Description
The data come from the RNA Mapping Database (RMDB), library OK1LIB. An RNA of 177 nucleotides, treated with 2A3 and DMS and read out base by base. For DMS the reverse transcriptase was MarathonRT. For 2A3 the reverse transcriptase was SuperScript II with manganese. The reactions ran in a buffer of 150 mM KOAc, 10 mM MgCl2 and 150 mM bicine (pH 8.5), at 24 C. The 2A3 profile rests on 1,449 reads.
RNA sequence: GGGAACGACUCGAGUAGAGUCGAAAAACGUAGCGAAAACAAAGUGCACACUCUUCGGGUGUAUAGAGCGCCACCCCCUUACAUUACAACUGGAAGGCGAAAGAAUAGGAGCUGACAGGACACCGAAUAGCAGCGUAAGAUUCGUCUUACGCUGCUAAAAAGAAACAACAACAACAAC
Reactivity to 2A3 in 0.01 (KOAc 150mM, MgCl2 10mM, bicine 150mM(pH8.5), 24C), signal-to-noise 3, nucleotides 027 to 126: a000c160g010u140a040g010c030g130a000a040a030a040c140a150a110a000g100u180g050c000a030c030a010c020u030c010u000u090c100g020g040g000u020g040u060a040u170a020g060a000g040c010g000c000c000a020c000c020c010c010c020u060u030a050c030a070u030u130a130c000a090a070c080u030g090g010a040a060g120g030c080g080a150a040a040g130a000a110u270a180g100g000a000g010c040u020g000a060c000a000g010g000a000c010a000c040c030g040a080a030
Reactivity to DMS in 0.01 (KOAc 150mM, MgCl2 10mM, bicine 150mM(pH8.5), 24C), signal-to-noise 1, nucleotides 027 to 126: a050c160g000u000a020g000c010g000a000a120a020a080c110a070a130a040g000u020g000c000a130c000a100c070u000c000u030u060c020g000g040g070u060g040u000a040u050a080g020a110g030c040g010c060c050a110c010c010c000c000c070u000u010a110c030a080u000u000a100c120a070a000c190u010g020g000a130a020g000g000c070g020a010a010a080g010a110a040u000a080g000g000a130g000c030u000g000a010c040a120g000g000a100c020a050c050c040g010a030a140